RNA sequence: GGGAACGACUCGAGUAGAGUCGAAAAGAUAUGGAUACUGGAUGUGUGAACUACAUUCGGGCAUAUAACAUCGGAAACGAUGUUAUAUGUCUCUAGCGUGAUGCACACUACCCAGUAUCCUAAGUCACGUAUACUAAGACUUCGGUCUUAGUAUACGAAAAGAAACAACAACAACAAC
Reactivity to 2A3 in 0.01 (KOAc 150mM, MgCl2 10mM, bicine 150mM(pH8.5), 24C), signal-to-noise 3, nucleotides 027 to 126: g030a010u120a040u190g010g010a010u000a010c000u010g000g020a010u010g010u000g010u020g030a150a120c040u090a040c150a030u020u110c070g000g000g010c000a010u030a000u010a000a000c000a000u000c010g050g010a040a100a070c020g000a000u010g000u000u000a000u000a000u000g000u040c000u000c010u000a020g060c030g070u060g020a090u300g030c010a010c000a010c010u060a090c000c000c000a000g000u000a000u040c000c000u000a040a010g010u000c040a000
Reactivity to DMS in 0.01 (KOAc 150mM, MgCl2 10mM, bicine 150mM(pH8.5), 24C), signal-to-noise 4, nucleotides 027 to 126: g010a040u000a300u010g010g010a010u000a000c000u010g000g000a080u000g010u000g000u010g000a070a060c040u000a030c010a080u000u010c220g010g010g000c000a010u000a010u000a010a000c000a010u000c000g000g000a160a140a260c000g020a010u000g000u010u000a000u000a010u000g000u000c000u010c060u010a030g030c150g020u000g000a070u010g010c000a000c000a000c000u000a180c170c000c000a020g000u000a000u000c000c000u000a000a060g000u010c060a290
About this RNA: Structure probing data (2A3 and DMS) for a 177-nucleotide construct. 2A3 adducts were read by reverse transcription with SuperScript II with manganese. The RNA was probed in 150 mM KOAc, 10 mM MgCl2 and 150 mM bicine (pH 8.5) at 24 C. For DMS, 5,275 sequencing reads were counted. DMS adducts were read by reverse transcription with MarathonRT. The data come from the RNA Mapping Database (RMDB), library TTRINS.